The record gives the reactivity of an RNA of 177 nucleotides to 2A3.
For 2A3 the reverse transcriptase was SuperScript II with manganese.
For 2A3, 286 sequencing reads were counted.
Conditions: 150 mM KOAc, 10 mM MgCl2 and 150 mM bicine (pH 8.5), 24 C.
RNA sequence: GGGAACGACUCGAGUAGAGUCGAAAAACACUGUAUUUCGGUGUAUUAUCUUCAUUUGGCUGUGAUCCGCCUGCACUUGGCUGUUUUUCCGUGCCCCCAAAUGAUGCAACAACAACGGCGAGCGCGGGUGGGCCUGAUACUUCGGUAUCAGGCCCAUAAAAGAAACAACAACAACAAC
Reactivity to 2A3 in 0.01 (KOAc 150mM, MgCl2 10mM, bicine 150mM(pH8.5), 24C), signal-to-noise 1, nucleotides 027 to 126: a000c010a000c000u100g070u300a250u160u300u300c030g000g010u000g120u100a260u180u110a040u140c100u110u130c060a100u000u080u140g000g030c000u000g010u000g140a150u030c030c000g030c010c010u000g000c010a130c150u000u090g010g000c000u000g000u080u000u000u180u000c050c000g030u070g050c070c000c000c000c040a000a090a090u120g000a110u120g140c050a110a160c000a010a000c000a020a070c010g050g000c040g080a000g130c000g000c000g020g060